[RMDB]
RNA sequence: GGGAACGACUCGAGUAGAGUCGAAAAAUGAGAUCCCAUCUUGCACACUGUGCUAAUUUGAAAUUCUCAUGCCUCCUACUUGGAGAGAUCUGGACUAGAAGUCAGGGCAUCUGACUCUGCCAGCCACAAAACGUACAAGGCUUCGGCCUUGUACGAACUCGAUAAUCAUCUUCGGAUGAUUAUCGAGAAAAGAAACAACAACAACAAC
Reactivity to DMS in 0.01 (KOAc 150mM, MgCl2 10mM, bicine 150mM(pH8.5), 24C), signal-to-noise 1, nucleotides 027 to 156: a010u000g000a030g000a080u000c000c000c010a110u000c110u000u000g020c010a040c030a300c100u000g040u010g010c000u010a060a050u010u010u020g000a050a080a040u000u000c010u010c000a040u000g000c100c000u010c010c010u000a140c180u010u010g000g000a050g010a140g010a080u000c020u000g030g030a110c100u000a090g020a140a100g010u000c020a000g020g040g020c200a070u020c010u010g000a040c010u000c040u000g000c000c010a030g060c050c020a130c070a040a080a060a160c030g010u000a000c000a000a020g010g000c060u000u010c300g080g010c000c010u000u010g000u000a010c000g000a030a060
Reactivity to 2A3 in 0.01 (KOAc 150mM, MgCl2 10mM, bicine 150mM(pH8.5), 24C), signal-to-noise 4, nucleotides 027 to 156: a000u030g000a010g000a030u040c010c020c000a030u070c070u040u060g000c010a020c040a090c220u300g000u010g010c030u090a090a160u080u070u160g080a050a030a050u100u020c000u000c020a020u050g030c000c000u040c000c030u100a280c110u170u300g000g010a050g000a000g010a060u060c010u010g010g050a080c040u110a090g020a190a000g080u000c000a000g040g090g150c080a150u070c110u000g000a000c000u000c000u000g000c000c000a030g050c070c010a100c030a050a110a070a030c010g000u010a000c000a000a000g000g000c000u020u130c110g060g000c000c000u000u000g010u030a000c000g000a000a000
Description
Chemical mapping of a 207-nucleotide RNA with DMS and 2A3. The reactions ran in a buffer of 150 mM KOAc, 10 mM MgCl2 and 150 mM bicine (pH 8.5), at 24 C. 2A3 adducts were read by reverse transcription with SuperScript II with manganese. For 2A3, 2,853 sequencing reads were counted.